[RMDB]
RNA sequence: GGGAACGACUCGAGUAGAGUCGAAAAUCUUUUUUCUUCUCUGAACAAUGGCUAGAGACAAAGCCCUACUUGUUUCUAACAUUUACGGUGAGCCAUUACUGAAUUUGGGUGUAUUCAUGUAUGCUGCUUCCUAUAUGUUUUCAAACAAUAAGUAUUAGCCUUUUAGGCGAUUCGUCGCCUAAAAGGCAAAAGAAACAACAACAACAAC
Reactivity to 2A3 in 0.01 (KOAc 150mM, MgCl2 10mM, bicine 150mM(pH8.5), 24C), signal-to-noise 1, nucleotides 027 to 156: u090c030u070u260u150u000u040u050c100u070u000c050u030c060u080g070a140a000c030a090a080u080g060g000c020u090a020g040a040g000a070c010a070a110a030g020c050c000c000u020a050c000u000u040g000u030u020u020c010u010a030a050c000a010u020u000u060a010c030g060g060u110g060a030g000c000c000a000u000u060a000c010u010g010a040a050u140u140u050g080g010g000u070g060u030a040u000u010c010a000u120g010u020a000u100g050c090u000g000c000u080u060c000c000u070a050u000a000u040g040u030u010u010u200c000a000a030a030c010a010a070u080a240a000g000u040a040u080u040a010